[RMDB]
An RNA of 207 nucleotides, treated with 2A3 and DMS and read out base by base. DMS adducts were read by reverse transcription with MarathonRT. The reactions ran in a buffer of 150 mM KOAc, 10 mM MgCl2 and 150 mM bicine (pH 8.5), at 24 C.

RNA sequence: GGGAACGACUCGAGUAGAGUCGAAAAAAGGAAUUAGCGUGCCUUCAUGCUAAGGGUUUGAUAUCUGCUAAAACCCGGUGCAUUCAUCAAUGCAGGUUAAGCCAAAGGGAUGUCCCGAGCGGAGGCCAAAAGUUCGCUACGUUCGCGUAGCGAACAACGUGUUACUUCUCUUCGGAGAAGUAACACGAAAAGAAACAACAACAACAAC
Reactivity to 2A3 in 0.01 (KOAc 150mM, MgCl2 10mM, bicine 150mM(pH8.5), 24C), signal-to-noise 2, nucleotides 027 to 156: a010a000g130g030a090a110u100u060a080g010c030g040u060g000c030c030u060u080c040a090u130g010c000u090a060a110g000g000g030u050u030u060g040a080u070a070u120c040u070g000c040u090a060a070a030a090c020c010c020g070g000u070g000c010a030u050u080c010a100u080c050a120a110u120g010c020a020g000g050u070u100a060a010g000c050c020a050a060a010g060g030g000a030u060g070u080c000c010c000g000a020g000c010g010g000a000g010g000c000c020a000a150a050a000g000u000u010c010g000c000u000a000c010g050u040u080c260g000c010g080u000a000g010c000g010a000a000c000a010a000
Reactivity to DMS in 0.01 (KOAc 150mM, MgCl2 10mM, bicine 150mM(pH8.5), 24C), signal-to-noise 2, nucleotides 027 to 156: a060a040g060g000a110a100u010u000a050g000c070g000u000g000c070c050u000u020c050a060u050g010c010u000a150a200g010g010g010u020u010u020g020a170u000a080u000c020u000g000c080u000a150a050a070a040c020c010c010g000g060u000g010c010a060u000u000c060a110u000c050a160a300u000g030c020a020g000g040u010u000a120a100g010c030c020a030a150a140g000g000g000a090u000g030u000c080c020c000g000a130g020c070g020g000a080g020g040c030c060a050a050a060a060g000u000u000c000g000c000u000a000c000g000u000u010c250g000c040g060u000a030g010c000g020a020a000c000a070a070